[RMDB]
RNA sequence: GGGAACGACUCGAGUAGAGUCGAAAAUGAAAAUGUGCGUCCCUCCCGAAGCUGCGCGCUCGGUCGAAGUGGACGACCACAGCCGAUAGAGGACUGCCGGUCUUCGGUCAAGGGAAAAAGAAAAAAACCAUAUAUCUGGUUUCGACCAGAUAUAUGGAAAAGAAACAACAACAACAAC
Reactivity to DMS in 0.01 (KOAc 150mM, MgCl2 10mM, bicine 150mM(pH8.5), 24C), signal-to-noise 3, nucleotides 027 to 126: u010g000a090a050a090a100u000g020u010g010c120g020u000c010c000c010u000c140c010c000g000a030a060g020c000u010g010c150g000c040g020c030u000c010g000g080u000c060g000a240a270g000u000g020g000a140c200g010a110c020c000a040c020a060g020c230c010g000a030u000a090g010a030g010g020a060c040u000g020c030c050g000g000u000c020u000u000c020g000g010u000c170a130a060g000g010g010a030a040a040a100a100g040a020a020a060a110a070a070a120
Reactivity to 2A3 in 0.01 (KOAc 150mM, MgCl2 10mM, bicine 150mM(pH8.5), 24C), signal-to-noise 2, nucleotides 027 to 126: u120g050a010a030a030a140u190g020u100g060c020g050u010c000c000c010u030c020c000c000g010a030a010g000c020u070g000c020g030c010g000c180u000c000g040g000u020c050g010a090a010g000u060g040g040a120c120g060a090c010c000a000c020a000g130c090c010g020a030u050a060g030a020g020g060a060c060u180g050c070c030g030g000u050c040u000u020c020g020g030u040c030a030a030g070g000g000a040a040a010a060a040g050a020a120a020a020a040a000a010